The record gives the reactivity of an RNA of 177 nucleotides to 2A3 and DMS. The 2A3 profile rests on 2,821 reads.

RNA sequence: GGGAACGACUCGAGUAGAGUCGAAAAGAUAUGGAAUCAGGUAGGGAGCUGACUGGUCGGAAACGACCAGCAGCAUCGAUCUAUAUGAUUCCUAAGUCAAAGCAUAUAUCCUUCGGGAUAUAUGCAACGAACAAGAGUGGUUCGCCACUCUUGUUCGAAAAGAAACAACAACAACAAC
Reactivity to 2A3 in 0.01 (KOAc 150mM, MgCl2 10mM, bicine 150mM(pH8.5), 24C), signal-to-noise 1, nucleotides 027 to 126: g000a000u050a010u060g000g010a000a000u000c020a000g100g000u020a000g020g100g070a230g030c000u010g240a300c010u040g000g020u020c010g000g040a010a030a030c010g000a020c000c000a010g000c010a000g020c000a010u090c080g000a030u000c000u000a020u010a000u030g010a010u000u000c000c010u000a020a000g030u000c120a300a080a040g000c010a020u030a000u000a010u000c010c000u040u140c300g150g030g000a010u030a000u010a010u000g030c020a010a010
Reactivity to DMS in 0.01 (KOAc 150mM, MgCl2 10mM, bicine 150mM(pH8.5), 24C), signal-to-noise 1, nucleotides 027 to 126: g000a030u000a090u020g010g010a000a010u020c000a020g030g070u000a010g000g000g020a190g050c000u000g010a170c000u000g000g010u000c020g010g000a030a040a050c000g020a030c000c000a000g000c000a000g000c010a060u010c280g020a080u000c010u000a000u000a090u020g010a030u000u000c000c000u000a010a100g000u000c000a140a130a150g020c010a040u000a010u000a000u010c000c000u000u010c240g010g000g000a030u000a000u000a000u000g000c000a030a100